[RMDB]
RNA sequence: GGGAACGACUCGAGUAGAGUCGAAAAAACUUGGAGAACGUGUACGCCAAGCUAUCUUAAACACUGUUAAAUUUUGUGACCACAUGGUCAAGGCUGGUUUAGUCGGUGUGCUCACACUAGACAACCACUGAUUAGGAUAGUUCGCUAUCCUAAUCAGAAAAGAAACAACAACAACAAC
Reactivity to 2A3 in 0.01 (KOAc 150mM, MgCl2 10mM, bicine 150mM(pH8.5), 24C), signal-to-noise 7, nucleotides 027 to 126: a000a000c070u050u010g020g010a100g010a110a040c050g030u050g030u170a030c040g000c000c000a010a000g000c020u050a050u090c020u040u110a080a090a010c050a030c080u070g080u150u120a090a120a210u160u170u100u090g130u030g010a020c010c010a090c090a300u300g000g000u020c020a010a010g090g000c050u040g000g050u030u040u110a020g000u020c020g010g000u010g000u030g030c030u090c040a010c000a000c000u030a080g000a020c010a010a010c010c010a020
Reactivity to DMS in 0.01 (KOAc 150mM, MgCl2 10mM, bicine 150mM(pH8.5), 24C), signal-to-noise 5, nucleotides 027 to 126: a040a050c030u010u000g010g010a090g020a110a090c160g010u000g000u000a110c130g000c010c010a030a020g000c050u000a070u000c030u000u000a090a070a080c110a050c110u000g010u010u000a060a070a130u010u000u000u010g000u010g010a030c010c020a180c240a110u020g030g010u000c030a050a070g010g030c120u000g000g000u000u000u010a060g020u000c020g000g000u000g010u000g000c200u000c170a110c010a010c030u010a050g020a020c010a080a010c020c060a130